[RMDB]
The data come from the RNA Mapping Database (RMDB), library OK2TRN.
An RNA of 177 nucleotides, treated with 2A3 and DMS and read out base by base.
Conditions: 150 mM KOAc, 10 mM MgCl2 and 150 mM bicine (pH 8.5), 24 C.

RNA sequence: GGGAACGACUCGAGUAGAGUCGAAAAUCUGAAGGCCCACACCCUAUUGUGGCUGGUAUAACCUUCAUUGACCUUGGAAGAUGUCUUUGACUAAUAGAAUGGAAAUGCUUGAAAAGGUUCCUCAGCCUGCCUUACCCUUAUUCGUAAGGGUAAGGCAAAAAGAAACAACAACAACAAC
Reactivity to 2A3 in 0.01 (KOAc 150mM, MgCl2 10mM, bicine 150mM(pH8.5), 24C), signal-to-noise 2, nucleotides 027 to 126: u020c020u060g080a050a040g080g030c010c070c000a000c030a010c010c060c010u170a140u100u270g070u110g030g040c050u010g000g000u070a110u070a150a030c000c000u000u000c020a010u000u050g070a070c000c020u000u040g050g060a060a030g030a040u040g080u090c000u080u040u090g020a040c000u000a040a130u070a190g170a170a070u070g010g030a050a100a050u100g020c010u040u030g020a010a020a050a050g020g000u040u040c000c000u040c000a000g010c020c000
Reactivity to DMS in 0.01 (KOAc 150mM, MgCl2 10mM, bicine 150mM(pH8.5), 24C), signal-to-noise 3, nucleotides 027 to 126: u000c110u010g000a050a040g010g020c100c020c040a100c210a100c090c050c070u000a070u010u010g020u000g030g040c300u000g030g020u000a040u010a100a160c030c030u000u000c010a040u000u000g000a050c030c080u030u000g000g040a050a100g000a100u000g000u000c030u000u000u010g010a100c140u010a050a140u010a140g010a100a050u000g020g010a090a070a090u000g000c070u000u000g000a090a100a100a040g000g010u000u000c050c040u000c080a090g000c040c070